[RMDB]
RNA sequence: GGGAACGACUCGAGUAGAGUCGAAAAGUGGCGUGCCUGUUGUCCUAGCUACUUGGAUGGCUGUGGUGGGAGGAUCACUUGAGCCCAGGAGGCAGUGGUUGCAGGGUGCUGUGAUCAAGCCACUGCACUACAAAGAAUAAUUCGUUAUUCUUUGUAGAAAAGAAACAACAACAACAAC
Reactivity to 2A3 in 0.01 (KOAc 150mM, MgCl2 10mM, bicine 150mM(pH8.5), 24C), signal-to-noise 9, nucleotides 027 to 126: g030u020g020g030c080g070u120g050c030c020u160g070u200u060g040u050c010c010u020a020g010c020u040a050c030u120u130g120g050a170u060g130g000c040u030g030u060g070g040u050g000g010g020a050g040g010a040u030c010a000c000u020u050g050a020g030c010c010c000a030g110g070a080g090g000c020a010g020u050g090g040u140u110g000c020a030g030g040g070u250g130c020u040g010u040g030a080u110c070a030a010g010c000c000a000c000u010g000c010a020
Reactivity to DMS in 0.01 (KOAc 150mM, MgCl2 10mM, bicine 150mM(pH8.5), 24C), signal-to-noise 9, nucleotides 027 to 126: g020u000g010g010c140g020u010g010c010c010u000g010u000u000g010u010c020c010u000a080g010c030u000a040c070u010u010g010g010a170u000g010g010c030u000g020u000g010g020u000g000g000g010a110g000g000a080u000c010a010c020u000u000g000a200g010c010c010c010a150g010g010a150g010g010c010a030g020u000g010g010u000u000g010c040a060g000g010g020u010g020c040u000g010u000g000a070u010c130a120a110g000c000c000a020c010u000g000c020a220